Source: RMDB library M2RFPK, as collected in RNAgym.
Chemical mapping of a 207-nucleotide RNA with 2A3 and DMS.
The reactions ran in a buffer of 150 mM KOAc, 10 mM MgCl2 and 150 mM bicine (pH 8.5), at 24 C.
The DMS profile rests on 2,730 reads.
The 2A3 profile rests on 1,839 reads.
RNA sequence: GGGAACGACUCGAGUAGAGUCGAAAAUAAGCAAGAGACAACCACCUUUCCCGCUGACAAUAGCGUUAUCCCUCUGCACUUCGGUAAUAUGAGGGCACAGUAAAUCCCGCAAGGAUGAGAAUGUGAUUAAACAGUUACAGCUUCGGCUGUAACUGAACACAUAGAUCGGGUUCGCCCGAUCUAUGUGAAAAGAAACAACAACAACAAC
Reactivity to 2A3 in 0.01 (KOAc 150mM, MgCl2 10mM, bicine 150mM(pH8.5), 24C), signal-to-noise 3, nucleotides 027 to 156: u200a040a000g030c040a050a020g000a010g040a160c070a060a060c040c030a040c010c020u030u040u030c030c000c000g010c090u060g040a060c090a090a150u090a150g040c020g110u120u100a110u100c000c010c000u000c000u040g020c040a020c050u050u070c170g110g000u070a080a050u100a080u300g010a010g000g000g000c000a000c000a020g000u010a010a010a040u010c000c010c010g130c140a050a030g020g000a010u020g010a000g030a050a010u000g020u010g000a020u100u210a150a120a030c010a010g010u010u010a000c000a000g020c000u060u100c170g090g020c000u000g000u000a000a000c000u000g000a010a010
Reactivity to DMS in 0.01 (KOAc 150mM, MgCl2 10mM, bicine 150mM(pH8.5), 24C), signal-to-noise 2, nucleotides 027 to 156: u000a050a130g000c040a030a120g000a180g000a130c060a100a110c020c000a100c030c040u010u000u000c010c000c020g010c080u020g010a140c080a040a190u000a060g020c010g010u020u010a100u000c000c000c000u020c020u000g010c090a050c100u000u010c240g060g030u030a040a180u000a110u010g010a020g000g010g010c030a020c020a070g060u010a100a100a110u000c010c010c000g010c190a040a170g020g030a070u010g000a050g000a100a060u010g010u000g010a170u000u000a070a090a160c000a010g010u000u000a010c010a030g020c010u000u000c300g060g030c000u000g000u000a000a000c000u010g010a030a180